An RNA of 207 nucleotides, treated with DMS and 2A3 and read out base by base. It was measured as part of the RMDB library OK3TST. Reactivities are given for positions 27 through 156.
RNA sequence: GGGAACGACUCGAGUAGAGUCGAAAACACACACACACACCCUAAAUGGGCAACAGUGGAGCCAGGCCCAGAAGGCUCCAGUUGGUCGCAUUAACAUGGUUCAGAGAAAGAAACUGAAUCAAAGUCGUCUCUCUCAUUCUAGGGACUGGAGUCAAGAGGCUAUUUAAUUAUUCGUAAUUAAAUAGCCAAAAGAAACAACAACAACAAC
Reactivity to DMS in 0.01 (KOAc 150mM, MgCl2 10mM, bicine 150mM(pH8.5), 24C), signal-to-noise 3, nucleotides 027 to 156: c040a120c070a090c060a090c060a100c050a110c000a100c020c000c010u010a030a080a130u000g020g010g030c030a040a070c090a090g000u000g020g010a030g080c000c040a100g010g010c050c030c040a170g030a120a170g010g000c010u000c000c000a030g010u010u000g000g000u000c080g000c070a130u000u010a060a100c070a130u010g020g020u010u000c040a070g010a190g000a090a050a160g010a170a170a160c010u000g000a040a020u010c040a050a080a100g000u000c030g000u000c010u000c020u000c020u000c040a100u010u000c060u000a070g010g010g010a090c030u010g000g010a060g030u000c040a040a130g010a260
Reactivity to 2A3 in 0.01 (KOAc 150mM, MgCl2 10mM, bicine 150mM(pH8.5), 24C), signal-to-noise 4, nucleotides 027 to 156: c060a000c000a000c000a010c000a000c000a010c040a050c000c000c000u030a060a060a040u080g000g010g030c010a050a020c040a060g120u040g030g010a010g020c010c010a070g010g110c000c020c020a010g070a120a050g000g010c000u000c000c000a000g020u010u040g070g030u050c020g000c060a040u050u100a130a080c050a100u080g000g000u000u000c010a010g050a030g070a120a160a010g120a090a170a060c000u010g000a000a000u010c000a010a040a030g060u080c030g010u020c020u010c000u020c010u010c110a030u140u030c050u100a040g020g040g020a030c030u020g020g020a020g050u100c050a020a020g300a020
Conditions: 150 mM KOAc, 10 mM MgCl2 and 150 mM bicine (pH 8.5), 24 C.
DMS adducts were read by reverse transcription with MarathonRT.